Notes
An RNA of 177 nucleotides, treated with DMS and 2A3 and read out base by base. It was measured as part of the RMDB library OK2TST. The 2A3 profile rests on 9,903 reads. 2A3 adducts were read by reverse transcription with SuperScript II with manganese. Reactivities are given for positions 27 through 126. Conditions: 150 mM KOAc, 10 mM MgCl2 and 150 mM bicine (pH 8.5), 24 C. For DMS, 20,640 sequencing reads were counted. DMS adducts were read by reverse transcription with MarathonRT.
RNA sequence: GGGAACGACUCGAGUAGAGUCGAAAAAUGAAGAUUGGAAUAGAAGUUGCCAAUGCCGCUACCAACGGAAGUGCUCCACGCCGUGGUCGGCGUAAACUGGUUUUCAACGGUUGGCAAUGGGGACAUAACCUAAAAUAAAUUUCGAUUUAUUUUAGGUAAAAGAAACAACAACAACAAC
Reactivity to DMS in 0.01 (KOAc 150mM, MgCl2 10mM, bicine 150mM(pH8.5), 24C), signal-to-noise 9, nucleotides 027 to 126: a090u010g010a080a060g010a130u000u000g010g010a100a100u010a090g010a110a120g020u000u000g010c020c010a090a070u000g010c020c010g000c130u010a060c030c020a040a080c050g010g010a050a090g020u010g010c140u000c080c060a080c150g010c010c020g020u000g010g020u000c020g010g010c000g020u000a020a060a050c060u000g000g010u000u000u010u010c140a080a090c060g010g000u000u000g000g000c020a020a030u000g000g000g000g010a110c120a080u010a120
Reactivity to 2A3 in 0.01 (KOAc 150mM, MgCl2 10mM, bicine 150mM(pH8.5), 24C), signal-to-noise 5, nucleotides 027 to 126: a010u110g020a060a050g080a110u110u140g040g060a070a060u080a190g130a170a020g040u020u020g020c010c000a020a020u040g020c020c010g000c090u080a020c010c010a090a020c010g010g020a090a060g060u040g080c060u040c080c020a020c010g000c010c000g040u060g080g060u110c040g000g000c010g000u020a010a010a020c020u020g060g010u060u040u060u100c050a060a030c030g020g000u030u040g000g000c000a010a030u020g000g000g020g020a010c010a040u110a030